An RNA of 177 nucleotides, treated with DMS and 2A3 and read out base by base. 2A3 adducts were read by reverse transcription with SuperScript II with manganese. For DMS the reverse transcriptase was MarathonRT.
RNA sequence: GGGAACGACUCGAGUAGAGUCGAAAAAUUCUGAGAAAGUUCACAGGGUGUAACUGAGUGAAUAGCCUUUUGGGCAAAAGGGAUUGAUGAUGCUCAGUGGAGAUUUUGAUCCCCUGGGUUGCCUGGGUACAGCUGUAAAUUUCGAUUUACAGCUGUAAAAAGAAACAACAACAACAAC
Reactivity to DMS in 0.01 (KOAc 150mM, MgCl2 10mM, bicine 150mM(pH8.5), 24C), signal-to-noise 8, nucleotides 027 to 126: a110u000u000c020u000g000a160g010a130a120a120g010u010u000c030a040c020a300g000g010g000u000g010u000a100a070c020u000g010a160g010u010g010a060a030u000a130g010c020c000u000u000u000u010g010g010g010c050a040a030a060a110g000g000g000a090u000u000g010a080u000g010a110u010g010c010u000c010a040g010u010g010g000a090g000a120u000u000u010u010g010a120u000c040c010c010c030u000g000g000g020u000u000g010c020c010u000g010g010g010
Reactivity to 2A3 in 0.01 (KOAc 150mM, MgCl2 10mM, bicine 150mM(pH8.5), 24C), signal-to-noise 3, nucleotides 027 to 126: a000u040u000c010u010g020a020g110a020a140a020g040u070u050c030a010c010a050g050g090g010u110g040u200a110a040c020u020g030a030g070u070g020a070a040u040a050g000c000c000u040u090u070u130g100g010g010c010a030a000a030a020g040g020g010a020u060u120g030a030u050g030a020u130g020c000u010c000a020g040u080g130g020a130g020a050u070u150u200u220g050a030u030c000c000c000c010u010g060g000g000u040u050g020c000c020u000g000g000g050
For DMS, 14,284 sequencing reads were counted. Reactivities are given for positions 27 through 126.